[RMDB]
RNA sequence: GGGAACGACUCGAGUAGAGUCGAAAAAAGACUUUUUUAGAGGGAGUAGGAUUACUGAGACUUUUGGCAAAUAUCAACAUUCACCAUUUGAUGGUAAGCAUUAUGGCAUUGAUUUUGCAUUGCCAAAAGUGGUCAGCAGGUUCGCCUGCUGACCACUAAAAGAAACAACAACAACAAC
Reactivity to 2A3 in 0.01 (KOAc 150mM, MgCl2 10mM, bicine 150mM(pH8.5), 24C), signal-to-noise 1, nucleotides 027 to 126: a000a000g100a000c020u190u120u000u000u000u030a000g000a020g070g000g000a130g010u140a010g070g030a060u190u160a120c010u000g010a000g070a050c070u050u000u100u000g020g000c000a000a000a000u160a060u060c000a030a030c230a070u120u240c010a240c000c070a000u110u070u030g150a070u130g060g000u070a080a000g140c000a010u080u100a050u030g000g130c130a100u020u020g050a070u140u000u010u010g220c110a010u020u020g000c000c000a000a000a000
An RNA of 177 nucleotides, treated with 2A3 and read out base by base. The reactions ran in a buffer of 150 mM KOAc, 10 mM MgCl2 and 150 mM bicine (pH 8.5), at 24 C. The data come from the RNA Mapping Database (RMDB), library OK1LIB. The 2A3 profile rests on 304 reads. Values are in units of 0.01, from 0 to 300, in steps of 10.